[RMDB]
Source: RMDB library OK2TST, as collected in RNAgym. Structure probing data (DMS) for a 177-nucleotide construct. The reactions ran in a buffer of 150 mM KOAc, 10 mM MgCl2 and 150 mM bicine (pH 8.5), at 24 C.
RNA sequence: GGGAACGACUCGAGUAGAGUCGAAAAAGCCGAGAGCGCUGCCCGCAUCGAGGCCAUCCGGGGGCGUUGCGAUGUCGAACAGCCGUAACCGCGUGCUGGUUGCCGCGCUGACCGUCAGCCUGGCCGGCAACGUGCGCGUCUUCGGACGCGCACGUUGAAAAGAAACAACAACAACAAC
Reactivity to DMS in 0.01 (KOAc 150mM, MgCl2 10mM, bicine 150mM(pH8.5), 24C), signal-to-noise 1, nucleotides 027 to 126: a050g000c030c000g000a240g010a080g020c020g020c050u010g000c030c110c060g030c090a090u000c050g000a190g000g010c020c010a110u000c040c010g000g000g000g000g010c040g000u000u000g000c080g030a060u000g000u010c040g000a080a130c040a030g010c030c110g000u000a180a120c180c170g010c050g010u010g010c040u020g000g010u010u000g020c060c050g040c230g020c020u000g020a110c110c120g030u010c080a070g010c020c070u030g010g010c000c060g020g010